[RMDB]
RNA sequence: GGGAACGACUCGAGUAGAGUCGAAAAGCAGGGCUUCGGACAGCUCGGCCGUGAUGGUGUACCGACCUUUCUGCUGCCGGCCAACCCGGUCAGCGCCCUGGUGGUCUUCGAGGUGAUGGUUCGGCCGCUAACGUCUCCGUUUCGACGGAGACGUUAGAAAAGAAACAACAACAACAAC
Reactivity to DMS in 0.01 (KOAc 150mM, MgCl2 10mM, bicine 150mM(pH8.5), 24C), signal-to-noise 2, nucleotides 027 to 126: g020c050a040g020g000g020c020u020u020c080g040g000a130c130a060g010c070u000c080g000g010c040c060g000u000g000a100u000g010g040u000g010u000a080c090c030g010a030c100c020u000u000u020c080u000g040c060u000g000c020c030g000g000c090c070a070a200c180c010c010g000g000u020c050a030g020c130g030c040c030c020u020g000g050u000g000g020u000c040u010u010c060g010a110g030g030u000g000a040u010g000g010u010u000c020g010g020c030c080g020
Reactivity to 2A3 in 0.01 (KOAc 150mM, MgCl2 10mM, bicine 150mM(pH8.5), 24C), signal-to-noise 1, nucleotides 027 to 126: g030c020a000g000g000g010c020u120u110c080g050g020a000c000a020g070c030u050c000g040g090c010c000g070u110g070a140u150g040g100u040g000u040a100c040c010g040a020c000c000u030u130u130c050u070g030c090u010g020c010c000g000g030c000c030a060a020c020c050c010g010g030u180c060a010g000c010g050c010c000c040u020g000g090u100g050g000u070c000u070u160c110g090a140g000g060u140g030a130u130g000g110u070u120c020g050g040c010c030g040